[RMDB]
RNA sequence: GGGAACGACUCGAGUAGAGUCGAAAAGAUAUGGACGGAGACAUGUAUUAAGCCUUCGUUGAAAUCGUAGCAUCGGAAACGAUGCUACGAUGGAGAAGGGUCACAUACAACAGCUCCGUCCUAAGUCCUAAGAUUCUGACUUCGGUCAGAAUCUUAGAAAAGAAACAACAACAACAAC
Reactivity to DMS in 0.01 (KOAc 150mM, MgCl2 10mM, bicine 150mM(pH8.5), 24C), signal-to-noise 2, nucleotides 027 to 126: g010a120u000a230u000g010g030a000c010g000g010a020g040a060c070a220u000g000u000a010u000u000a170a300g000c000c000u000u010c010g040u010u070g020a160a150a020u000c010g000u020a020g020c020a000u000c000g020g010a150a080a290c000g020a020u000g000c000u020a000c010g020a000u000g000g020a100g020a020a000g020g000g010u000c050a110c300a040u000a000c000a020a020c300a240g000c010u000c010c000g000u010c000c010u000a040a110g010u000c010